[RMDB]
RNA sequence: GGGAACGACUCGAGUAGAGUCGAAAAGGUGGAAGCUGCAAGGCAUAUUGAGGCUUAGGCUUUGGAACGCCUACAACACCGCUCUACCACAUUCUAUUGGUCAAAGCAAGCCCAGCUCAGAUGCGAGGGGUGGGAAGCAGAUGCCUCUCUGCGUGGAUCCAUUUAAUAUGUUCGCAUAUUAAAUGGAAAAAGAAACAACAACAACAAC
Reactivity to 2A3 in 0.01 (KOAc 150mM, MgCl2 10mM, bicine 150mM(pH8.5), 24C), signal-to-noise 8, nucleotides 027 to 156: g050g000u020g010g020a090a020g010c030u060g010c090a070a050g040g020c050a050u080a100u140u170g030a010g000g010c010u040u050a040g010g010c010u080u090u130g070g030a090a030c060g000c000c000u040a040c050a090a020c010a010c010c020g030c020u010c010u030a060c010c020a040c020a100u170u080c050u180a140u100u190g040g000u060c040a070a050a040g030c020a050a030g000c010c010c000a030g010c010u040c050a070g030a130u130g060c050g030a060g000g020g000g030u040g010g030g010a080a010g010c010a020g020a040u100g010c000c000u010c010u000c010u040g020c020g030u050g060g010a040
Reactivity to DMS in 0.01 (KOAc 150mM, MgCl2 10mM, bicine 150mM(pH8.5), 24C), signal-to-noise 4, nucleotides 027 to 156: g030g030u000g020g020a080a130g040c040u000g000c080a090a090g030g010c020a080u000a120u000u000g010a050g010g020c030u010u010a090g040g020c010u000u000u000g020g000a100a080c150g020c050c040u000a070c090a060a080c020a100c020c010g020c030u000c030u000a160c030c010a060c070a080u010u000c070u000a160u000u000g010g020u000c060a050a070a090g010c040a070a140g030c020c010c020a100g020c030u000c040a190g000a120u010g020c010g010a170g020g010g020g030u000g000g000g010a080a160g000c010a070g010a090u000g020c020c010u000c040u000c020u000g030c030g010u010g000g000a230